The record gives the reactivity of an RNA of 177 nucleotides to DMS and 2A3. The reactions ran in a buffer of 150 mM KOAc, 10 mM MgCl2 and 150 mM bicine (pH 8.5), at 24 C. For DMS the reverse transcriptase was MarathonRT.
[RMDB]
RNA sequence: GGGAACGACUCGAGUAGAGUCGAAAAGUACUGAGGUUCGCCUCAGUACAAAAGCAGAUCUGAGCCUGCGAGCUCUCUGCCUAACUAGGGAACGCAAUAAAUAAACGUGCAUGUUCGCAUGCACGAAUCCCUUUCAAUCGUUCGCGAUUGAAAGGGAAAAAGAAACAACAACAACAAC
Reactivity to DMS in 0.01 (KOAc 150mM, MgCl2 10mM, bicine 150mM(pH8.5), 24C), signal-to-noise 2, nucleotides 027 to 126: g000u000a000c020u000g010a030g000g010u000u010c300g030c000c000u010c000a030g050u000a000c010a020a050a070a260g010c000a000g010a110u000c160u010g000a060g020c000c020u000g000c250g040a150g030c010u000c010u000c010u000g010c030c050u010a090a070c030u000a080g010g000g040a090a100c070g020c270a100a130u010a120a050a090u000a050a070a180c000g020u000g000c030a000u000g000u040u010c190g000c010a010u000g010c000a000c050g000a030a040
Reactivity to 2A3 in 0.01 (KOAc 150mM, MgCl2 10mM, bicine 150mM(pH8.5), 24C), signal-to-noise 1, nucleotides 027 to 126: g000u000a000c000u020g000a040g060g050u070u150c220g130c020c000u000c000a010g000u000a000c000a000a000a000a010g000c000a000g000a110u100c130u200g000a010g000c000c030u110g150c100g040a040g000c000u030c020u000c000u010g000c000c000u060a070a020c050u050a060g060g000g080a080a020c050g000c090a070a110u120a190a160a040u160a100a160a030c000g000u010g030c000a000u010g030u000u000c160g000c040a000u010g000c000a010c010g010a000a040